[RMDB]
RNA sequence: GGGAACGACUCGAGUAGAGUCGAAAAGUGUAGGGGGACUGAGUUUCCACUUGAGGGUACAAGGGAAAAUGAGCAAGGCUUUGCAUGCCCAGCUGGGUUUUCAUAGGUCUAUCUGCUACUCUCUCAAUAGUAAUUACGGAUUCGUCCGUAAUUACUAAAAAGAAACAACAACAACAAC
Reactivity to 2A3 in 0.01 (KOAc 150mM, MgCl2 10mM, bicine 150mM(pH8.5), 24C), signal-to-noise 4, nucleotides 027 to 126: g070u050g050u100a070g030g010g000g010g010a010c020u020g010a010g070u020u050u020c030c020a130c050u030u060g030a050g060g070g050u100a060c040a030a060g030g000g040a030a050a000a100u120g020a020g020c050a050a010g040g000c020u080u060u100g010c010a020u070g010c000c010c010a060g090c140u150g020g050g000u060u120u080u080c040a050u090a070g020g010u000c010u040a100u040c020u040g020c010u020a050c010u020c000u010c000u010c020a020a040
Reactivity to DMS in 0.01 (KOAc 150mM, MgCl2 10mM, bicine 150mM(pH8.5), 24C), signal-to-noise 9, nucleotides 027 to 126: g010u000g010u000a070g010g010g010g000g000a080c070u010g010a170g010u000u000u000c030c020a130c130u010u000g000a110g010g000g010u000a080c080a070a080g000g010g000a030a030a060a070u010g010a080g010c060a090a100g010g000c050u000u010u010g010c120a080u010g000c010c010c030a200g010c130u000g010g010g020u000u000u000u010c030a050u000a110g010g010u000c030u000a090u010c070u000g010c050u000a060c050u000c060u000c020u000c070a060a160